[RMDB]
Description
Structure probing data (DMS and 2A3) for a 177-nucleotide construct. 2A3 adducts were read by reverse transcription with SuperScript II with manganese. DMS adducts were read by reverse transcription with MarathonRT. The DMS profile rests on 10,194 reads. It was measured as part of the RMDB library OK1LIB. High DMS reactivity at an A or C suggests that its Watson-Crick edge is free. The 2A3 profile rests on 1,496 reads.

RNA sequence: GGGAACGACUCGAGUAGAGUCGAAAAGCUGUGUAUCGCAGGGCUCGAUCAGUGGGCGUUGGCUCAGGUCGAUUGCUCUAUUGGUUUGGUUUGUGACCUGGUUGCUCGCUGAGAGUAAAACCAAUGGCUAAAUAAUAUAUUUCGAUAUAUUAUUUAGAAAAGAAACAACAACAACAAC
Reactivity to DMS in 0.01 (KOAc 150mM, MgCl2 10mM, bicine 150mM(pH8.5), 24C), signal-to-noise 4, nucleotides 027 to 126: g000c010u000g000u010g010u010a010u010c020g010c250a020g000g000g010c010u010c060g010a060u000c010a060g010u010g010g000g010c010g010u030u020g010g000c040u010c060a050g020g020u000c010g000a060u020u020g010c030u000c010u020a040u010u010g000g010u000u010u000g000g000u010u000u010g010u030g010a060c010c020u000g000g020u010u010g000c010u000c010g010c170u010g000a180g000a080g000u010a050a030a030a040c000c010a010a060u020g000g010
Reactivity to 2A3 in 0.01 (KOAc 150mM, MgCl2 10mM, bicine 150mM(pH8.5), 24C), signal-to-noise 2, nucleotides 027 to 126: g030c010u010g010u000g030u120a050u110c040g020c050a020g000g050g000c000u000c030g010a050u030c000a020g060u040g000g000g000c040g040u120u170g110g000c040u030c090a030g000g040u030c020g020a080u030u240g000c010u000c020u040a040u030u050g050g020u020u010u080g040g040u010u010u060g050u080g050a030c000c000u010g040g050u080u200g020c000u000c020g020c080u080g030a020g010a000g050u090a010a070a020a010c010c000a010a070u070g030g020